[RMDB]
RNA sequence: GGGAACGACUCGAGUAGAGUCGAAAAGGCGGCCGUGAGACCAUUGUCGCCGAAUGCGUGUUAUGCAGUGGGCGUUUGAGCACAUAAUGGUGGAAGGCACCGGCCGGCGACAGGCUAUCUCGCAUUAGGGCGAAUGUUCGUUCGCGAGCGUUCGCCCAAAAGAAACAACAACAACAAC
Reactivity to DMS in 0.01 (KOAc 150mM, MgCl2 10mM, bicine 150mM(pH8.5), 24C), signal-to-noise 6, nucleotides 027 to 126: g010g010c050g020g010c020c040g010u010g010a220g000a050c050c050a080u040u020g000u000c050g010c000c000g000a080a050u010g020c100g010u010g000u030u030a060u050g010c050a020g000u020g010g010g010c020g020u010u040u050g010a130g000c030a040c050a040u020a050a060u010g010g000u000g000g020a160a150g010g010c010a090c040c000g000g010c090c000g000g000c020g010a020c050a050g010g000c070u030a090u000c020u000c020g030c100a100u020u020a170
Reactivity to 2A3 in 0.01 (KOAc 150mM, MgCl2 10mM, bicine 150mM(pH8.5), 24C), signal-to-noise 7, nucleotides 027 to 126: g040g010c030g020g010c020c020g040u050g040a060g020a040c020c030a050u010u030g010u000c020g000c010c000g010a020a010u020g010c040g010u060g040u090u140a100u210g010c010a020g050u110g010g090g000c050g020u020u050u130g060a040g040c020a010c010a040u120a080a050u100g050g010u020g010g070a110a040g090g000c000a010c020c000g010g010c030c010g000g000c000g010a010c020a010g020g060c030u090a060u090c020u030c020g020c040a140u080u300a110